RNA sequence: GGGAACGACUCGAGUAGAGUCGAAAACGGGGUCACUCAGUGCUAUGGGAGAUUCAUGGUCCUGGAGUAAAGGAAGAGCGUGUUCCAUCUAAGUUUAUCACGCCGCUAUUUUUAUCACAGUCAAUAAGCACCUGGACGGGUUCGCUCGUUCAGGUGCAAAAGAAACAACAACAACAAC
Reactivity to 2A3 in 0.01 (KOAc 150mM, MgCl2 10mM, bicine 150mM(pH8.5), 24C), signal-to-noise 4, nucleotides 027 to 126: c000g030g040g000g030u060c000a000c010u020c010a010g030u040g070c000u060a030u050g000g070g000a060g020a110u110u110c050a070u070g000g000u080c010c000u000g010g010a040g030u070a000a030a000g060g020a050a030g030a010g020c020g070u000g010u050u030c020c010a050u040c100u240a050a260g070u050u080u120a160u040c000a010c010g000c020c000g000c030u020a160u030u060u050u020u100a070u090c060a040c030a170g040u040c000a030a090u140a210a020
Reactivity to DMS in 0.01 (KOAc 150mM, MgCl2 10mM, bicine 150mM(pH8.5), 24C), signal-to-noise 3, nucleotides 027 to 126: c050g000g010g010g000u000c070a050c000u010c030a060g000u000g030c070u000a050u000g000g010g000a100g000a100u000u010c060a040u000g020g030u000c060c000u010g010g010a130g030u040a070a050a040g000g010a060a050g000a110g000c010g010u010g000u020u000c050c020a080u020c120u020a110a060g000u040u000u040a090u040c000a040c030g020c010c030g000c060u010a010u010u010u020u000u020a110u030c130a050c080a090g000u010c090a050a040u030a060a180